This 177-nucleotide RNA was probed chemically with DMS and 2A3.

[RMDB]
RNA sequence: GGGAACGACUCGAGUAGAGUCGAAAACGGGGGGAUCAGCUUGGUGGCAGACGUCGCCCACCGGGGCCGCCCGGGCCCCCCGGUUCGUCCGGACAGCCUGCCGGCCGGCUGCCCCAACCGAGGGUGGGAUAAGUUUUUCUUUCGAGAAAAACUUAUCAAAAGAAACAACAACAACAAC
Reactivity to DMS in 0.01 (KOAc 150mM, MgCl2 10mM, bicine 150mM(pH8.5), 24C), signal-to-noise 3, nucleotides 027 to 126: c080g010g010g020g010g000g010a100u040c040a060g000c010u020u040g080g010u010g010g010c040a030g000a100c060g010u010c100g010c070c010c040a040c070c080g010g000g010g020c080c060g010c070c030c060g020g000g020c030c050c010c010c040c010g000g010u020u020c070g000u020c030c020g010g010a090c070a140g000c030c000u010g000c030c020g010g030c010c000g010g000c000u000g010c070c000c010c010a070a060c030c020g010a160g010g000g010u030g000g010
Reactivity to 2A3 in 0.01 (KOAc 150mM, MgCl2 10mM, bicine 150mM(pH8.5), 24C), signal-to-noise 6, nucleotides 027 to 126: c030g010g000g010g000g010g020a090u300c020a010g050c020u150u300g050g010u030g050g010c010a010g020a090c040g040u060c020g040c010c010c000a010c000c010g000g000g010g000c010c020g030c060c030c000g020g000g000c030c000c000c010c000c000g000g000u040u060c070g060u050c040c000g040g020a030c030a040g040c000c000u020g010c000c000g050g010c010c010g000g000c010u020g010c000c000c010c010a020a050c010c010g020a080g030g030g050u120g020g050
Description: The RNA was probed in 150 mM KOAc, 10 mM MgCl2 and 150 mM bicine (pH 8.5) at 24 C. Source: RMDB library OK1LIB, as collected in RNAgym. For DMS, 7,872 sequencing reads were counted.